An RNA of 177 nucleotides, treated with 2A3 and DMS and read out base by base. DMS adducts were read by reverse transcription with MarathonRT. Reactivities are given for positions 27 through 126.
RNA sequence: GGGAACGACUCGAGUAGAGUCGAAAACAGGGGCGCAAUGCGGCCAGCCGGGACUGAGGAACGCGCUUCGGCACGGAUGCUGGCAUAAUGGUUGUAAGCGGCCCGUCUUGAAACACGGACCAAGGAGCCUUCCCUUUACGUUCGCGUAAAGGGAAGGAAAAGAAACAACAACAACAAC
Reactivity to 2A3 in 0.01 (KOAc 150mM, MgCl2 10mM, bicine 150mM(pH8.5), 24C), signal-to-noise 4, nucleotides 027 to 126: c040a010g010g010g000g060c010g020c030a000a070u150g040c020g040g000c010c020a020g010c000c010g020g050g040a110c030u080g040a050g050g070a110a020c080g020c000g020c030u020u050c100g020g010c030a000c020g060g000a040u090g070c010u000g010g030c000a020u230a090a140u120g070g010u010u040g040u050a020a070g010c010g010g120c020c000c020g020u010c030u040u090g060a040a050a000c060a000c050g040g010a020c060c000a030a050g020g000a000g070
Reactivity to DMS in 0.01 (KOAc 150mM, MgCl2 10mM, bicine 150mM(pH8.5), 24C), signal-to-noise 3, nucleotides 027 to 126: c090a160g030g020g020g000c010g010c020a070a040u040g000c090g030g000c000c020a090g000c010c030g010g000g030a180c080u000g020a080g000g010a140a070c150g020c150g020c000u020u010c130g000g010c070a110c050g000g000a110u020g010c000u000g000g040c000a100u030a130a160u000g030g000u000u010g000u010a110a180g000c100g000g010c010c030c000g010u030c010u000u010g020a130a080a060c250a040c090g010g000a030c010c050a090a060g030g000a090g000